[RMDB]
RNA sequence: GGGAACGACUCGAGUAGAGUCGAAAACUCGGGAGCGCACCGGCCCACGCCGACGAUCACCGCCCGACUCAACUUCCAGCUGGCGUUCGGCGCCCGGGUCGGCCAGCGCUUGGCCGAUGCCCGAGAGAAUAUACCACGGCUUCGGCCGUGGUAUAUUAAAAGAAACAACAACAACAAC
Reactivity to 2A3 in 0.01 (KOAc 150mM, MgCl2 10mM, bicine 150mM(pH8.5), 24C), signal-to-noise 2, nucleotides 027 to 126: c010u010c020g000g000g030a010g000c030g000c030a060c040c000g020g000c010c000c020a000c040g000c000c000g020a050c020g060a130u110c020a040c050c090g010c000c000c000g170a210c020u060c170a090a300c060u210u020c030c010a010g000c040u020g030g000c020g020u100u100c000g000g020c010g020c060c090c100g000g000g010u000c000g030g010c020c020a000g000c020g000c000u000u010g000g040c000c000g000a040u060g010c000c000c010g010a020g000a000g020
Reactivity to DMS in 0.01 (KOAc 150mM, MgCl2 10mM, bicine 150mM(pH8.5), 24C), signal-to-noise 2, nucleotides 027 to 126: c180u040c000g020g070g020a020g000c000g080c000a210c000c060g050g050c010c020c000a160c040g000c010c000g000a070c070g010a040u000c050a080c110c020g000c000c030c240g000a220c060u000c040a000a110c080u000u000c040c070a170g000c120u000g010g020c050g020u030u020c000g000g000c000g050c080c060c210g000g000g020u010c000g060g050c010c110a100g030c090g000c010u000u000g010g020c050c000g000a040u000g000c000c020c000g010a150g000a210g000
Annotation:
Chemical mapping of a 177-nucleotide RNA with 2A3 and DMS. Source: RMDB library OK1LIB, as collected in RNAgym. Values cover nucleotides 27 to 126. The DMS profile rests on 1,431 reads. The reactions ran in a buffer of 150 mM KOAc, 10 mM MgCl2 and 150 mM bicine (pH 8.5), at 24 C. 2A3 adducts were read by reverse transcription with SuperScript II with manganese.